Description: Chemical mapping of a 177-nucleotide RNA with DMS and 2A3. For DMS the reverse transcriptase was MarathonRT. Values cover nucleotides 27 to 126.

RNA sequence: GGGAACGACUCGAGUAGAGUCGAAAAGACGCGAGAGACGCGAGACGCGCAAUGGGAGAAGCCGCAAUAGAUGAUACGAAGGAAGAGGCAAGACGGAGAGCGCGCAACGAUCUCCAAUAACCAAGAACCUCAUACUCGAGUUCGCUCGAGUAUGAGGAAAAGAAACAACAACAACAAC
Reactivity to DMS in 0.01 (KOAc 150mM, MgCl2 10mM, bicine 150mM(pH8.5), 24C), signal-to-noise 2, nucleotides 027 to 126: g000a080c140g000c010g030a050g040a000g000a090c100g020c100g020a140g050a100c020g000c000g000c000a040a130u040g000g000g010a060g040a090a030g000c020c040g010c010a010a080u040a100g000a060u070g000a160u120a060c060g000a170a100g000g000a160a120g000a120g030g100c100a130a040g020a100c300g000g000a000g040a110g000c010g010c000g030c240a000a150c000g000a130u000c000u020c040c080a080a040u000a130a080c020c050a000a060g000a150a170
Reactivity to 2A3 in 0.01 (KOAc 150mM, MgCl2 10mM, bicine 150mM(pH8.5), 24C), signal-to-noise 2, nucleotides 027 to 126: g060a000c010g000c030g070a040g040a000g000a100c000g050c000g010a050g030a030c050g010c000g010c000a090a240u100g050g000g000a090g000a050a120g070c000c000g020c090a050a010u080a150g100a080u080g000a010u100a110c030g040a060a000g080g020a030a100g010a000g060g020c140a110a020g130a000c100g000g010a040g000a000g000c010g000c000g020c020a030a030c110g010a030u040c000u000c000c000a000a120u100a110a010c050c000a020a050g010a070a030